[RMDB]
An RNA of 177 nucleotides, treated with DMS and read out base by base.
RNA sequence: GGGAACGACUCGAGUAGAGUCGAAAAGCCAGGGAGGCAGGGGGUCUGCAGAGGCAGCUGCCGACACAACUGGGACAGCCCUCUUGAAUGGAAGCCUCUGGGUGGCUGUUGGCAGUGCGUGGCACACCGCCACACGAAACUUCGGUUUCGUGUGGCGAAAAGAAACAACAACAACAAC
Reactivity to DMS in 0.01 (KOAc 150mM, MgCl2 10mM, bicine 150mM(pH8.5), 24C), signal-to-noise 1, nucleotides 027 to 126: g000c020c010a090g020g000g000a090g020g030c050a040g010g010g010g010g000u000c000u000g020c070a040g000a080g020g070c030a090g010c020u000g000c020c020g020a220c100a100c170a080a100c050u000g010g000g010a100c050a020g000c010c030c020u000c030u000u000g020a140a060u030g010g000a080a190g000c090c020u000c000u000g000g000g020u000g000g010c060u000g010u000u000g010g000c050a030g010u000g000c070g040u000g010g000c030a060c130a110c130
About this RNA: DMS adducts were read by reverse transcription with MarathonRT.